RNA sequence: GGGAACGACUCGAGUAGAGUCGAAAACGGACCCCCUUCCAAAAUAACCGAGGAGGGUCCUUGGAGCAUAGAGGACCACUGGAUCCAUGGAAAUUCUCUUUCCCGAUUCCGUCCGAACCCCAUCCCCCCAAAGUAAUAAGUUCGCUUAUUACUUUGGAAAAGAAACAACAACAACAAC
Reactivity to DMS in 0.01 (KOAc 150mM, MgCl2 10mM, bicine 150mM(pH8.5), 24C), signal-to-noise 7, nucleotides 027 to 126: c120g010g000a030c000c000c000c010c010u000u000c020c040a040a060a150a120u000a060a140c280c160g000a030g010g010a060g010g000g010u000c000c000u000u010g010g010a070g010c140a090u000a090g000a120g000g020a050c030c090a090c110u000g010g010a060u000c030c040a140u010g010g000a030a060a070u010u000c080u000c080u010u000u000c000c010c060g000a160u000u000c040c060g000u000c020c010g010a120a140c040c010c000c030a120u010c000c010c000c080
Reactivity to 2A3 in 0.01 (KOAc 150mM, MgCl2 10mM, bicine 150mM(pH8.5), 24C), signal-to-noise 4, nucleotides 027 to 126: c040g010g000a010c000c020c020c000c010u020u070c030c010a110a140a090a290u140a100a060c060c040g010a010g040g010a060g010g000g020u000c010c000u000u050g040g030a050g010c060a080u100a180g080a080g050g020a020c010c030a060c120u050g040g010a060u000c040c010a040u110g040g070a050a090a080u210u030c070u030c000u070u020u020c010c010c010g010a090u100u020c010c010g010u000c010c010g020a070a070c000c010c000c020a060u060c010c000c000c020